[RMDB]
RNA sequence: GGGAACGACUCGAGUAGAGUCGAAAAAUCAUACUGGAUAGUAGAAUUAGGUGUCACGGUCUCUGCUAUCUAGUAUGAGCACCACAGGUAGACUAGAUUGUGAUACCUAAUGUCUAUCCGUGGUAAAGUAUCAGGAUGUAUUCGUACAUUCUGAUACAAAAGAAACAACAACAACAAC
Reactivity to 2A3 in 0.01 (KOAc 150mM, MgCl2 10mM, bicine 150mM(pH8.5), 24C), signal-to-noise 9, nucleotides 027 to 126: a000u030c010a000u010a010c000u010g000g000a000u000a000g020u010a000g050a100a070u120u020a080g050g030u110g060u130c060a020c070g050g030u010c030u000c000u030g000c000u000a000u000c000u000a000g000u000a000u000g000a000g020c020a010c000c010a000c010a010g000g000u000a000g000a010c000u010a010g010a120u060u140g060u070g100a040u100a090c010c000u020a040a030u090g010u000c000u000a010u000c000c000g000u000g000g000u030a040a040a010
Reactivity to DMS in 0.01 (KOAc 150mM, MgCl2 10mM, bicine 150mM(pH8.5), 24C), signal-to-noise 7, nucleotides 027 to 126: a080u010c020a020u010a010c020u010g000g000a010u000a000g020u000a030g000a050a070u010u000a100g000g010u010g000u010c090a060c050g000g000u020c050u000c030u000g000c000u000a000u000c010u000a020g000u010a000u010g000a030g010c190a060c010c020a030c010a060g000g000u000a000g000a030c010u010a050g000a080u010u020g020u020g010a100u040a050c080c010u000a040a050u030g000u000c000u000a000u000c000c010g010u000g000g000u010a030a050a090
An RNA of 177 nucleotides, treated with 2A3 and DMS and read out base by base. DMS (dimethyl sulfate) methylates the pairing face of unpaired adenines and cytosines. DMS adducts were read by reverse transcription with MarathonRT. For 2A3, 73,619 sequencing reads were counted. It was measured as part of the RMDB library OK1LIB.